[RMDB]
The data come from the RNA Mapping Database (RMDB), libraries RFM100 and RFMREP. This 177-nucleotide RNA was probed chemically with 2A3 and DMS. The reactions ran in a buffer of 150 mM KOAc, 10 mM MgCl2 and 150 mM bicine (pH 8.5), at 24 C. For DMS the reverse transcriptase was MarathonRT.
RNA sequence: GGGAACGACUCGAGUAGAGUCGAAAAGCCCGGACAUCUCGUCCAUCACGGCUCGCCCAAUCAGGCCAGCCGUGGCCGCCGACCCUACAGGGUUGCGCCGGCCUCCGGGUUGCACACCGCCCAGAAGAACAAAUUUAGGUUUCGACCUAAAUUUGUUAAAAGAAACAACAACAACAAC
Reactivity to 2A3 in 0.01 (KOAc 150mM, MgCl2 10mM, bicine 150mM(pH8.5), 24C), signal-to-noise 8, nucleotides 027 to 126: g010c000c000c000g000g010a060c050a100u080c080u060c120g100u050c050c010a030u100c020a000c000g000g000c000u000c010g020c000c000c000a030a230u200c100a020g010g000c010c040a000g010c000c000g000u010g000g000c010c000g010c010c000g010a010c010c000c000u140a170c160a220g000g000g000u010u010g030c130g020c080c060g010g000c000c000u000c000c000g000g000g000u030u060g020c030a040c000a020c030c030g040c010c010c010a060g060a150a020g030
Reactivity to DMS in 0.01 (KOAc 150mM, MgCl2 10mM, bicine 150mM(pH8.5), 24C), signal-to-noise 7, nucleotides 027 to 126: g020c010c000c020g020g000a070c190a070u010c090u010c080g000u020c100c110a070u040c060a030c010g000g000c010u010c300g000c000c010c090a100a170u090c300a110g020g010c010c090a010g000c000c000g000u010g000g000c010c010g020c030c010g010a010c000c000c000u060a120c300a180g010g000g000u000u000g010c090g040c060c040g020g010c010c180u000c030c020g010g010g020u000u000g000c130a090c080a080c090c100g010c020c010c010a140g000a150a080g000